[RMDB]
RNA sequence: GGGAACGACUCGAGUAGAGUCGAAAACAUGUAGCACAGUAGUGCUACAUGCAGAUAGAUCGUGAGAUCUAUCAGAAUAAGUAGAGCAUAAGCCCGGCUCUACGUCAGCACGAAGACUAUGGUGACAUUGUCGACGUGCGGACAUAAAAGGGCGAAAGUAUUAUGCGAUAUUCGUAUCGCAUAAUACAAAAGAAACAACAACAACAAC
Reactivity to DMS in 0.01 (KOAc 150mM, MgCl2 10mM, bicine 150mM(pH8.5), 24C), signal-to-noise 5, nucleotides 027 to 156: c000a010u000g020u000a010g020c000a020c010a300g010u010a140g040u010g000c010u000a000c000a000u000g000c020a140g010a010u010a000g010a010u000c000g010u000g010a260g020a010u000c000u000a010u000c010a140g010a180a120u010a110a180g040u000a030g000a040g020c000a010u000a130a300g010c000c000c000g000g010c000u010c000u000a020c000g020u000c010a030g000c020a030c020g000a020a300g010a030c000u000a040u010g010g000u010g010a280c020a040u000u000g010u000c020g000a300c030g000u010g020c000g000g010a000c010a120u000a040a040a110a090g040g130g010c010g000a110a110a180
Reactivity to 2A3 in 0.01 (KOAc 150mM, MgCl2 10mM, bicine 150mM(pH8.5), 24C), signal-to-noise 9, nucleotides 027 to 156: c000a000u000g000u000a000g040c010a010c060a140g300u300a040g000u120g000c000u000a000c000a000u000g000c000a000g000a000u000a000g000a000u000c000g040u040g060a040g000a010u000c000u000a000u000c010a010g090a060a080u290a150a010g000u000a000g000a000g000c020a010u060a250a020g000c000c000c000g000g000c000u000c000u000a000c000g000u000c000a010g000c000a000c010g010a010a000g000a000c020u060a020u010g020g050u100g050a040c010a000u010u040g000u000c000g000a010c000g000u000g000c010g000g000a000c010a000u220a050a080a030a050g000g000g000c020g010a040a030a000
An RNA of 207 nucleotides, treated with DMS and 2A3 and read out base by base. For DMS the reverse transcriptase was MarathonRT. For 2A3 the reverse transcriptase was SuperScript II with manganese. Values cover nucleotides 27 to 156.